[RMDB]
RNA sequence: GGGAACGACUCGAGUAGAGUCGAAAACUCGCAAAACAAUACUUGCCAACAACAAUCUGGCACUCGCAGCUUAAUUAAAUAAGUUGCCGUCCUCUGAGGCUUCGCCUGUGGGCCGAGGCAGGACGUCAUACAGCAGGCUGGUUCCUUCGGCUGGGUCGUAUACCCUUUUGUUCGCAAAAGGGUAUACAAAAGAAACAACAACAACAAC
Reactivity to 2A3 in 0.01 (KOAc 150mM, MgCl2 10mM, bicine 150mM(pH8.5), 24C), signal-to-noise 5, nucleotides 027 to 156: c020u030c030g010c060a080a120a090a050c060a120a160u160a250c090u070u130g000c010c020a030a060c010a040a060c010a020a190u110c070u070g010g000c020a030c040u070c070g010c000a000g000c000u030u040a040a050u160u130a130a280a130u070a060a030g000u000u010g000c020c000g010u000c010c000u010c010u040g010a010g010g010c000u050u060c080g040c020c020u030g000u070g000g000g000c010c010g000a020g020g000c030a020g020g010a010c010g000u010c000a050u120a110c020a020g030c000a000g020g000c010u040g030g020u050u100c010c000u030u080c040g030g000c050u060g010g010g050u040c020
Reactivity to DMS in 0.01 (KOAc 150mM, MgCl2 10mM, bicine 150mM(pH8.5), 24C), signal-to-noise 2, nucleotides 027 to 156: c020u000c070g030c110a090a090a150a110c050a050a180u010a010c110u000u020g010c000c020a160a130c070a060a090c070a110a120u000c050u000g010g010c040a110c070u020c030g040c000a020g020c000u000u000a050a100u000u010a130a110a180u010a020a020g010u000u000g000c020c000g010u010c020c000u010c010u010g020a300g010g000c020u000u000c040g000c040c020u030g030u000g020g010g010c040c010g000a300g000g020c300a030g050g020a030c020g000u000c040a150u010a030c080a060g040c020a070g000g000c020u000g050g030u000u000c040c010u010u000c040g010g020c000u000g000g010g020u010c060